[RMDB]
RNA sequence: GGGAACGACUCGAGUAGAGUCGAAAAGGGUAACUAUAACCCUCUUAAGGUAGCGAAAUUCCUUGUCGGUUAAAUGCCGACCUGCAUGAAUGGCGUAACGAGGUCCCCACUGUCCCCGGCUGGGGCCCGGCGAAACCUCUGCCAGGCGCAUAUGCCUCAACCAAAAUACCUUCGGGUAUUUUGGUUGAAAAGAAACAACAACAACAAC
Reactivity to 2A3 in 0.01 (KOAc 150mM, MgCl2 10mM, bicine 150mM(pH8.5), 24C), signal-to-noise 1, nucleotides 027 to 156: g030g030g030u040a090a040c090u090a110u150a300a070c000c040c000u040c020u170u140a220a080g010g010u080a030g070c030g040a030a050a100u070u000c000c000u070u060g000u010c000g000g000u050u070a060a180a000u300g010c000c000g030a040c000c000u020g000c010a220u110g040a100a030u050g000g000c010g010u020a000a070c040g010a090g000g070u140c020c030c000c000a030c020u040g050u090c000c000c000c000g030g040c100u050g000g030g010g030c010c000c010g050g010c020g020a090a000a000c000c030u050c030u040g060c060c030a030g010g000c010g010c030a070u100a010u300g000c000c000u000